[RMDB]
RNA sequence: GGGAACGACUCGAGUAGAGUCGAAAACCCUGGGUAUAGUAACAAUGUUGAAUAUGACUCUUAAUUGAGGAAAUGGGUGAUCCGCAGCCAAAUCCUAAGGACAUUUUAUUGUCUAUGGAUGCAGUUCAGCGACUAGACGGCAGUGGGUAUUGUAGAGCAGCAUAUAUAUGUUCGCAUAUAUAUGCUGAAAAGAAACAACAACAACAAC
Reactivity to DMS in 0.01 (KOAc 150mM, MgCl2 10mM, bicine 150mM(pH8.5), 24C), signal-to-noise 3, nucleotides 027 to 156: c010c010c010u000g020g020g030u000a080u020a050g010u050a080a080c050a120a090u000g020u000u000g010a100a100u000a100u000g020a140c020u000c020u000u010a100a200u000u000g010a060g000g000a080a090a130u000g000g000g050u000g000a100u000c070c090g000c050a130g000c020c020a080a130a050u000c020c010u000a080a180g010g010a030c000a020u010u000u020u010a080u030u010g030u010c010u020a300u010g010g000a040u000g000c100a040g000u000u010c030a110g010c030g010a100c050u000a060g010a100c070g000g000c040a080g000u000g010g020g010u000a060u010u000g010u010a070g000a160g010
Reactivity to 2A3 in 0.01 (KOAc 150mM, MgCl2 10mM, bicine 150mM(pH8.5), 24C), signal-to-noise 5, nucleotides 027 to 156: c010c000c010u030g040g020g030u110a140u080a170g090u050a080a070c080a130a180u110g020u060u090g060a080a040u170a070u150g050a040c020u000c000u050u120a200a150u280u090g030a040g040g030a050a070a130u080g020g000g020u020g020a040u020c030c030g000c020a010g010c000c010a060a080a030u010c000c000u050a090a080g030g000a000c010a000u080u150u150u250a220u300u060g000u000c010u020a020u070g000g000a010u040g000c030a010g000u040u080c040a010g020c020g040a030c010u040a020g020a070c060g030g010c020a020g000u020g030g010g010u090a070u070u130g050u060a030g010a030g080